[RMDB]
RNA sequence: GGGAACGACUCGAGUAGAGUCGAAAAUGCGGUUGUGCAAAACGGUGUUAUUGCCGAGAAGGGAACGCAUGAGAGGUUGGUGAAAACGUCAAAGGGCUCUUAUGCUACUCUUUUUUUUUCUCAUAUGCACAUAGUGUACCUUCGGGUACACUAUGUGAAAAGAAACAACAACAACAAC
Reactivity to 2A3 in 0.01 (KOAc 150mM, MgCl2 10mM, bicine 150mM(pH8.5), 24C), signal-to-noise 1, nucleotides 027 to 126: u070g000c060g110g040u230u080g060u140g170c000a000a010a040a040c010g010g040u070g030u160u170a150u120u280g000c000c020g000a030g010a000a010g020g010g030a000a050c060g000c020a020u010g000a000g020a010g030g270u040u070g000g010u050g040a200a100a080a050c000g010u040c070a060a050a050g110g070g020c010u000c000u030u010a000u020g000c000u010a040c020u040c060u040u020u000u000u040u020u000u060u000c090u010c000a140u220a080u280g020
Reactivity to DMS in 0.01 (KOAc 150mM, MgCl2 10mM, bicine 150mM(pH8.5), 24C), signal-to-noise 1, nucleotides 027 to 126: u000g010c040g040g030u000u010g020u000g040c050a040a080a090a130c070g030g000u000g030u010u040a080u000u000g010c020c020g000a090g010a020a060g000g010g000a040a120c230g000c010a000u010g010a020g000a000g020g000u000u000g010g000u000g020a030a110a080a100c110g010u000c040a040a030a110g020g010g020c000u000c020u030u000a010u000g000c000u010a250c010u000c000u000u040u000u000u000u000u000u000u000c010u000c010a110u000a070u010g000
Notes
An RNA of 177 nucleotides, treated with 2A3 and DMS and read out base by base. The RNA was probed in 150 mM KOAc, 10 mM MgCl2 and 150 mM bicine (pH 8.5) at 24 C.